[RMDB]
RNA sequence: GGGAACGACUCGAGUAGAGUCGAAAAGAUAUGGAAGUGUCUACCCACCACGUUGGUAGAGAACUACUCGGGUAUAUCGGAAACGAUAUAUUACGAGCUCUACCAACGUGAGGACACUUCCUAAGUCCUGCAUUACCUACUUCGGUAGGUAAUGCAGAAAAGAAACAACAACAACAAC
Reactivity to 2A3 in 0.01 (KOAc 150mM, MgCl2 10mM, bicine 150mM(pH8.5), 24C), signal-to-noise 1, nucleotides 027 to 126: g130a090u300a190u300g020g000a060a000g010u000g000u000c010u060a300c020c020c000a000c000c010a010c000g010u000u000g030g000u030a000g070a010g040a130a040c260u300a070c010u300c010g080g000g000u020a000u000a010u030c000g020g000a060a110a010c010g020a010u010a000u000a000u020u150a300c030g010a000g000c040u040c000u010a030c000c000a000a000c000g010u000g000a030g000g000a020c000a000c010u010u000c000c000u000a030a000g090u180c000
Reactivity to DMS in 0.01 (KOAc 150mM, MgCl2 10mM, bicine 150mM(pH8.5), 24C), signal-to-noise 1, nucleotides 027 to 126: g030a140u020a090u000g040g030a040a040g040u000g040u000c000u000a120c090c020c000a300c090c010a050c000g000u000u000g070g000u000a000g000a010g000a120a000c120u040a300c000u020c000g080g020g010u010a000u000a000u000c000g010g000a120a000a270c020g010a000u000a000u000a010u000u030a160c020g010a010g020c000u000c000u000a030c000c000a000a080c000g000u000g000a040g040g000a010c000a000c010u000u000c000c000u000a020a160g000u020c030
This 177-nucleotide RNA was probed chemically with 2A3 and DMS.
The RNA was probed in 150 mM KOAc, 10 mM MgCl2 and 150 mM bicine (pH 8.5) at 24 C.
It was measured as part of the RMDB library TTRINS.
For 2A3 the reverse transcriptase was SuperScript II with manganese.